[RMDB]
RNA sequence: GGGAACGACUCGAGUAGAGUCGAAAAAGCAGGACCGCGUUACGACGCGUUCCUGCAGCAAUGAGUAGAAGCGGUCAAAUUUGGUGUCGAGUUCCAACAAACCAAAUUCGGGCAUUGCUCACUGCAAAAAACUCUCUUUAGUUCGCUAAAGAGAGAACAUUCCGUAGCGGUUCGCCGCUACGGAAUGAAAAGAAACAACAACAACAAC
Reactivity to 2A3 in 0.01 (KOAc 150mM, MgCl2 10mM, bicine 150mM(pH8.5), 24C), signal-to-noise 1, nucleotides 027 to 156: a010g000c000a000g000g000a010c000c030g030c010g100u050u140a170c300g000a000c030g040c000g000u000u000c000c000u000g000c010a000g000c000a000a010u030g000a000g000u040a010g000a070a060g080c100g090g040u040c050a010a000a000u030u010u020g060g040u060g070u120c110g080a150g150u160u000c070c000a070a040c040a120a150a000c000c000a000a000a000u020u040c040g010g020g000c000a020u030u050g000c000u000c000a000c000u000g000c000a000a000a000a060a060a080c000u000c000u000c000u000u010u000a000g020u020u100c260g000c130u000a000a000a000g000a000g020a000g000a000a000

The record gives the reactivity of an RNA of 207 nucleotides to 2A3.
Conditions: 150 mM KOAc, 10 mM MgCl2 and 150 mM bicine (pH 8.5), 24 C.
Source: RMDB library M2RFPK, as collected in RNAgym.